Overview
An RNA of 177 nucleotides, treated with DMS and read out base by base. It was measured as part of the RMDB library RFMREP.
RNA sequence: GGGAACGACUCGAGUAGAGUCGAAAAUUUUCGUAGCCGUGAAGUUAAUGGCUAGAGUGACUAGACCCGUAACAUUGCUAUGAAAUCAUUUGAACUGAAAUUUGUUGAUCUGCGGUUUAUUUUCAAGACAUAUUCCUACCUUCGGGUAGGAAUAUGUAAAAGAAACAACAACAACAAC
Reactivity to DMS in 0.01 (KOAc 150mM, MgCl2 10mM, bicine 150mM(pH8.5), 24C), signal-to-noise 2, nucleotides 027 to 126: u010u010u000u000c020g040u000a010g010c020c180g000u000g000a110a200g020u010u010a150a070u020g000g010c000u000a010g000a300g000u010g000a120c010u000a010g010a140c050c020c050g000u010a050a080c020a030u000u010g010c000u000a010u000g000a010a000a020u010c110a120u010u000u000g020a020a070c060u000g010a070a110a080u020u010u010g020u010u010g000a050u000c090u010g020c210g010g000u000u000u000a030u000u000u000u000c070a110a120g000
The reactions ran in a buffer of 150 mM KOAc, 10 mM MgCl2 and 150 mM bicine (pH 8.5), at 24 C.